RNA sequence: GGGAACGACUCGAGUAGAGUCGAAAACAAUGGAGGUUCGCCUCCAUUGAAAGCGCAACCCAUCUCAACUUCAAGCGCAGGGAAAAGAGAAAGAAGGGUUAAAAAGCUACCCGUUCGCGGGUAGCAACUCAUGGAACAUGUUCGCAUGUUCCAUGAGAAAAGAAACAACAACAACAAC
Reactivity to DMS in 0.01 (KOAc 150mM, MgCl2 10mM, bicine 150mM(pH8.5), 24C), signal-to-noise 2, nucleotides 027 to 126: c000a000a020u000g000g000a000g000g010u000u010c160g010c010c000u000c000c000a000u000u000g000a030a070a130g020c060g000c150a110a090c020c010c020a140u000c070u020c090a150a200c080u000u000c050a070a130g000c060g020c040a070g000g010g000a050a100a070a110g000a080g000a060a070a080g000a040a120g000g000g010u000u000a030a070a070a130a070g000c000u000a000c000c000c000g000u000u010c160g000c010g000g000g020u000a010g040c000a030a040
Reactivity to 2A3 in 0.01 (KOAc 150mM, MgCl2 10mM, bicine 150mM(pH8.5), 24C), signal-to-noise 2, nucleotides 027 to 126: c010a010a000u010g010g010a010g010g010u070u040c110g070c060c010u030c000c000a000u000u000g010a020a010a000g090c080g010c080a010a080c000c010c000a020u040c020u020c040a080a190c060u170u080c110a170a110g050c050g010c130a060g040g020g000a060a090a100a070g030a040g010a030a130a010g050a060a070g030g020g040u070u090a080a070a020a020a010g020c000u000a000c020c020c000g000u020u070c250g040c020g040g000g000u010a000g000c000a000a010

Source information:
Source: RMDB library M2PK50, as collected in RNAgym. Structure probing data (DMS and 2A3) for a 177-nucleotide construct.